[RMDB]
RNA sequence: GGGAACGACUCGAGUAGAGUCGAAAAUGUGUAUUCAAGCUUAUUUGUGUGUUCAUGGGGUACCGAUGUAGCUAAUAAUAAUGAUGUGGUCAUUAUGCAGGGUUACGUUGCAUAAAACCAAAGAGUGCGACUGGAGGAUAUUCGUAUCCUCCAGUCGAAAAGAAACAACAACAACAAC
Reactivity to DMS in 0.01 (KOAc 150mM, MgCl2 10mM, bicine 150mM(pH8.5), 24C), signal-to-noise 2, nucleotides 027 to 126: u000g030u010g010u000a020u000u000c100a080a140g020c070u000u000a060u000u000u000g010u020g040u000g010u040u020c040a110u010g020g020g000g010u000a050c200c020g010a020u000g010u000a000g010c040u010a090a090u000a110a020u010a040a030u010g010a040u020g020u010g020g010u000c060a040u000u010a020u000g000c120a060g020g010g050u000u010a040c110g040u000u000g000c050a040u000a030a020a110a140c050c010a060a040a040g030a070g000u000g010
Reactivity to 2A3 in 0.01 (KOAc 150mM, MgCl2 10mM, bicine 150mM(pH8.5), 24C), signal-to-noise 2, nucleotides 027 to 126: u080g060u010g010u070a140u090u110c070a060a030g000c030u160u090a070u100u250u090g090u010g020u010g030u050u080c080a140u110g000g000g030g050u000a050c020c000g000a000u020g000u020a010g050c010u050a070a040u110a140a020u050a060a040u120g090a010u130g100u090g230g010u000c050a070u000u000a010u020g020c030a060g060g100g030u020u060a080c180g040u120u030g010c000a000u030a050a050a000a000c010c020a030a110a000g090a010g030u180g020